[RMDB]
RNA sequence: GGGAACGACUCGAGUAGAGUCGAAAAAGAAAUAGAUGAAGUAGGAGGCUGUUAGCGCUCUAGUGUGUCUUCAGAUAAGAUAUGUCUGGCCUACUUCAUCGGAUACAUAGGACCAAGGCUAAAAAAAUCUAUCAGUAGUAUUCGUACUACUGAUAGAAAAAGAAACAACAACAACAAC
Reactivity to 2A3 in 0.01 (KOAc 150mM, MgCl2 10mM, bicine 150mM(pH8.5), 24C), signal-to-noise 4, nucleotides 027 to 126: a000g070a010a030a020u130a020g010a000u000g000a000a000g000u010a010g010g050a020g110g000c060u060g070u300u110a040g030c030g020c040u030c060u100a060g040u030g010u010g010u090c010u010u030c040a020g050a210u180a100a050g040a050u080a030u180g080u020c020u010g040g050c010c000u000a000c000u000u020c010a010u000c000g000g010a010u050a020c060a020u120a040g060g000a010c030c030a050a030g090g000c050u150a070a040a000a000a010a010a130
Reactivity to DMS in 0.01 (KOAc 150mM, MgCl2 10mM, bicine 150mM(pH8.5), 24C), signal-to-noise 5, nucleotides 027 to 126: a060g000a070a080a100u010a140g010a010u000g000a020a010g000u010a010g000g010a220g010g000c030u010g020u000u010a050g040c090g010c080u010c090u010a040g020u000g020u000g010u010c010u000u010c100a110g000a070u010a030a070g000a080u000a060u000g010u000c000u000g010g010c010c000u000a000c000u000u000c000a000u000c000g010g000a090u000a070c150a080u010a060g000g010a140c020c030a060a080g010g010c070u020a010a000a020a120a070a060a100